An RNA of 177 nucleotides, treated with 2A3 and DMS and read out base by base.
[RMDB]
RNA sequence: GGGAACGACUCGAGUAGAGUCGAAAACAGCUUCUUCGGAUUGCGCGGAUCGAGGAAAUCGAGCGCGAUCAGCGCAUUUUCCAGAUGGACGAACAUCCGCUCGAUCUCGUCGCUUUGCGCGAGCGUAAGCUCGUGAUUACUUCGGUAAUCACGAGCUAAAAGAAACAACAACAACAAC
Reactivity to 2A3 in 0.01 (KOAc 150mM, MgCl2 10mM, bicine 150mM(pH8.5), 24C), signal-to-noise 4, nucleotides 027 to 126: c010a040g060c050u040u020c000u070u070c070g270g080a300u050u050g000c010g000c000g010g020a010u020c000g010a000g030g060a050a030a010u010c000g020a010g030c010g000c110g020a020u030c040a060g040c040g000c040a040u070u050u070u040c030c010a020g050a170u120g060g080a020c020g020a060a060c010a040u010c000c010g000c000u000c000g010a020u000c010u000c000g300u030c000g000c040u020u030u070g000c010g010c010g000a020g000c020g030u060a030
Reactivity to DMS in 0.01 (KOAc 150mM, MgCl2 10mM, bicine 150mM(pH8.5), 24C), signal-to-noise 4, nucleotides 027 to 126: c090a130g010c100u000u000c040u000u000c060g010g010a150u000u000g000c000g020c010g010g000a010u000c000g010a080g000g010a030a020a010u000c010g000a050g010c000g010c100g010a010u000c090a150g010c050g000c020a080u000u000u000u010c180c200a160g000a040u010g000g000a080c090g000a120a130c300a060u000c020c020g000c000u000c010g010a020u000c020u010c000g000u000c010g000c090u000u010u010g000c000g020c070g000a020g000c060g010u010a110
About this RNA: It was measured as part of the RMDB library OK2TST.